[RMDB]
RNA sequence: GGGAACGACUCGAGUAGAGUCGAAAAGUUGGUUCCUCGGAACUAAACUCGUGGUUCCUGUGGUUCACACCUGACCUCCUGAGCAGAAAAGAAAAAAGAAGGCGGCUCGGAGGAGCGCUUCAGGGAUCAUAACUAACUUGUUCGCAAGUUAGUUAUGAAAAGAAACAACAACAACAAC
Reactivity to 2A3 in 0.01 (KOAc 150mM, MgCl2 10mM, bicine 150mM(pH8.5), 24C), signal-to-noise 4, nucleotides 027 to 126: g020u020u020g000g010u000u010c000c000u000c140g070g010a010a020c010u110a220a060a070c020u040c080g110u120g060g030u020u030c010c000u020g040u060g060g040u060u070c060a040c020a060c140c020u020g040a040c000c000u010c010c030u100g000a010g000c030a010g190a080a220a090a030g200a040a290a060a050a010a020g090a070a040g220g130c140g070g000c020u000c030g000g040a020g000g010a010g010c130g000c020u080u050c010a020g000g000g030a030u020
Reactivity to DMS in 0.01 (KOAc 150mM, MgCl2 10mM, bicine 150mM(pH8.5), 24C), signal-to-noise 3, nucleotides 027 to 126: g020u000u000g000g000u000u000c010c010u010c300g020g000a010a000c020u010a030a040a050c030u000c070g020u000g030g010u000u000c010c000u000g020u010g020g020u000u000c090a140c100a180c030c010u000g000a070c010c010u000c010c000u020g010a050g020c030a170g000a070a060a120a130g020a000a100a110a080a180a090g000a110a110g000g020c110g020g040c020u000c000g010g010a030g020g010a030g020c110g000c110u010u010c020a040g010g020g010a070u000
Description:
This 177-nucleotide RNA was probed chemically with 2A3 and DMS. Conditions: 150 mM KOAc, 10 mM MgCl2 and 150 mM bicine (pH 8.5), 24 C. The DMS profile rests on 2,505 reads.